[RMDB]
The data come from the RNA Mapping Database (RMDB), library OK2TRN. An RNA of 177 nucleotides, treated with DMS and 2A3 and read out base by base. The 2A3 profile rests on 726 reads. The RNA was probed in 150 mM KOAc, 10 mM MgCl2 and 150 mM bicine (pH 8.5) at 24 C.
RNA sequence: GGGAACGACUCGAGUAGAGUCGAAAAUCGAUGUUGAUUAUGUAAGUAACAGAAUUUGCGCUGAAUAUUCUUGAGUAUCGGUCGCCUUAUAGCCGCAAUGUUAAGGACCACAGGCCCAGUUAACCGGAAACAGUACGCAAUUCGUUGCGUACUGUUUAAAAGAAACAACAACAACAAC
Reactivity to DMS in 0.01 (KOAc 150mM, MgCl2 10mM, bicine 150mM(pH8.5), 24C), signal-to-noise 4, nucleotides 027 to 126: u000c050g020a140u010g010u000u000g010a080u010u030a060u000g010u000a070a100g010u010a060a070c050a070g010a060a100u000u010u010g010c070g010c050u010g020a110a070u000a080u010u000c010u000u000g000a080g020u010a030u010c030g020g000u000c080g020c040c020u000u000a060u000a100g030c050c040g000c100a070a050u000g010u000u010a050a070g010g010a050c040c050a050c130a080g000g000c010c030c020a090g010u000u000a060a140c100c060g000g010
Reactivity to 2A3 in 0.01 (KOAc 150mM, MgCl2 10mM, bicine 150mM(pH8.5), 24C), signal-to-noise 2, nucleotides 027 to 126: u090c010g010a070u150g110u270u130g010a090u070u160a070u140g110u170a090a170g000u080a040a000c050a060g100a170a230u000u070u200g050c030g000c050u010g060a170a040u070a160u200u030c030u100u040g050a030g020u070a060u240c030g000g060u060c020g000c030c000u130u140a100u070a040g040c060c000g060c050a000a000u000g030u060u070a070a030g050g020a040c040c010a010c010a100g090g000c000c000c000a060g020u060u120a080a000c060c010g070g050